RNA sequence: GGGAACGACUCGAGUAGAGUCGAAAAUUUGGCGAGAACGUGUCCGCGGACACCAAGACCGCCAUGGCGGUGGGCUUGCUGCUGCUGCAGUCUCGCUGCCACCCCGAAGUGCUGCAGCUGUACAGUCACCCUUCUGCCAUGAGGAAGCUUGACAUACGGUGUGACUAAGGUUCGCCUUAGUCACACCAAAAGAAACAACAACAACAAC
Reactivity to 2A3 in 0.01 (KOAc 150mM, MgCl2 10mM, bicine 150mM(pH8.5), 24C), signal-to-noise 1, nucleotides 027 to 156: u050u090u100g090g000c080g000a100g080a080a040c140g050u000g010u000c010c000g030c160g100g020a000c000a040c030c000a050a000g030a070c000c040g050c100c000a000u000g010g010c000g000g030u000g010g030g070c120u110u170g020c050u090g000c010u030g000c000u020g000c000a010g050u000c010u040c050g100c040u100g100c060c000a030c020c020c000c000g060a080a020g050u080g200c000u020g000c020a020g000c010u080g010u060a140c010a030g010u020c000a110c000c000c010u230u170c000u040g000c000c000a000u000g000a030g000g040a080a000g110c000u010u100g080a070c050a070u280a100c160
An RNA of 207 nucleotides, treated with 2A3 and read out base by base. Source: RMDB library OK3TST, as collected in RNAgym. Reactivities are given for positions 27 through 156. Reactivities are rounded to 0.1 and cut off at 0 and 3. For 2A3, 534 sequencing reads were counted.